Source: RMDB library OK1LIB, as collected in RNAgym. This 177-nucleotide RNA was probed chemically with 2A3 and DMS. 2A3 adducts were read by reverse transcription with SuperScript II with manganese.

RNA sequence: GGGAACGACUCGAGUAGAGUCGAAAAGAUUUCGUGUCUUAGCUGAAACGAUACAACGCACGAGAUUCCAAGGUCUCUGUAGAACGACCGCUUGUGACGUCAUAGCUAUCACGUUCGACAUACGAAAGGUAUGUACUAGGUUCGCCUAGUACAUACCAAAAGAAACAACAACAACAAC
Reactivity to 2A3 in 0.01 (KOAc 150mM, MgCl2 10mM, bicine 150mM(pH8.5), 24C), signal-to-noise 7, nucleotides 027 to 126: g060a030u030u030u040c010g000u000g040u000c070u080u060a030g000c010u020g030a060a050a050c060g010a020u050a100c040a060a000c040g010c010a010c020g010a000g010a070u180u040c090c040a080a050g040g000u000c010u000c030u130g140u140a080g060a150a040c080g020a030c030c000g010c020u010u010g000u010g030a070c000g020u030c020a070u060a090g000c010u020a020u070c020a010c030g020u020u030c030g050a040c030a070u180a050c070g080a110a020a010
Reactivity to DMS in 0.01 (KOAc 150mM, MgCl2 10mM, bicine 150mM(pH8.5), 24C), signal-to-noise 8, nucleotides 027 to 126: g010a080u010u020u010c000g020u000g020u020c130u000u000a030g020c040u010g000a120a120a100c120g010a110u020a070c120a070a050c120g030c030a030c030g000a040g000a080u010u020c110c140a120a060g010g000u010c010u010c090u010g010u010a080g010a100a080c130g000a070c110c020g000c020u010u000g020u000g000a080c030g010u000c060a170u040a040g010c000u020a040u010c040a030c020g000u000u000c070g000a050c130a080u030a060c080g010a050a050a080

The RNA was probed in 150 mM KOAc, 10 mM MgCl2 and 150 mM bicine (pH 8.5) at 24 C.